[RMDB]
Chemical mapping of a 177-nucleotide RNA with 2A3 and DMS. 2A3 adducts were read by reverse transcription with SuperScript II with manganese. The 2A3 profile rests on 11,894 reads.
RNA sequence: GGGAACGACUCGAGUAGAGUCGAAAACGGGGUUCUGCGAACCAUGUGACUGGUUGCUACCGCGGCGGGGUCAAGACCUGUUGGUUUUUCGAACCCUGGGAUAUGUGGAUCAUUUUGGUCCCGCUGCGUGUAUUAUAAUAUUCGUAUUAUAAUACACAAAAGAAACAACAACAACAAC
Reactivity to 2A3 in 0.01 (KOAc 150mM, MgCl2 10mM, bicine 150mM(pH8.5), 24C), signal-to-noise 9, nucleotides 027 to 126: c010g000g000g000g020u040u030c040u100g040c030g060a010a010c020c000a030u100g070u070g170a090c100u050g020g020u030u060g020c040u080a070c020c060g000c000g020g000c000g000g000g000g010u030c010a010a000g040a050c010c030u040g100u060u090g030g020u020u030u010u050u140c040g020a000a000c000c000c000u010g010g010g020a080u080a070u230g140u150g120g070a120u130c050a080u090u070u020u080g000g000u000c000c000c000g000c010u010g000c020
Reactivity to DMS in 0.01 (KOAc 150mM, MgCl2 10mM, bicine 150mM(pH8.5), 24C), signal-to-noise 7, nucleotides 027 to 126: c030g010g010g000g010u010u010c010u010g020c160g000a020a030c010c010a050u010g020u030g010a120c150u010g000g010u000u000g010c120u020a090c100c050g010c020g000g000c000g000g000g000g000u010c030a030a060g000a080c050c030u010g010u010u010g010g010u010u010u000u010u030c300g000a020a020c000c010c020u000g000g000g010a120u040a030u020g020u030g010g010a080u020c050a150u000u020u020u010g000g000u000c010c000c010g010c020u000g000c110